Source information:
The record gives the reactivity of an RNA of 207 nucleotides to 2A3. For 2A3 the reverse transcriptase was SuperScript II with manganese. It was measured as part of the RMDB library OK3TST. The reactions ran in a buffer of 150 mM KOAc, 10 mM MgCl2 and 150 mM bicine (pH 8.5), at 24 C. Reactivities are given for positions 27 through 156.

RNA sequence: GGGAACGACUCGAGUAGAGUCGAAAACGCAGCUAAAAUGGCACGGGCAGGUCUUCUGGUUAUCGAAGGUAAGGUCUGGCGAACGGUGUAUUACCGGUUUGCUACCAGGGAAGAACGGGAAGGAAAGAUGAGCACGAACCUGAUUUUUAAGGAGUGACGGGAUAUUUUACUUCGGUAAAAUAUCCCGAAAAGAAACAACAACAACAAC
Reactivity to 2A3 in 0.01 (KOAc 150mM, MgCl2 10mM, bicine 150mM(pH8.5), 24C), signal-to-noise 2, nucleotides 027 to 156: c050g030c050a080g000c040u200a060a120a050a260u150g020g060c050a030c070g000g010g040c000a010g020g000u000c000u020u000c010u040g080g000u170u090a090u180c090g050a130a020g070g010u020a040a000g030g010u030c170u100g060g010c040g020a020a000c010g000g000u040g020u100a220u140u300a030c000c000g140g100u020u010u130g000c000u000a010c000c010a020g020g010g030a060a030g010a020a010c040g010g020g000a000a010g060g040a000a050a050g080a020u030g030a000g000c000a010c060g010a030a030c020c080u050g050a090u050u020u020u030u070a040a030g030g000a000g080u100g040a020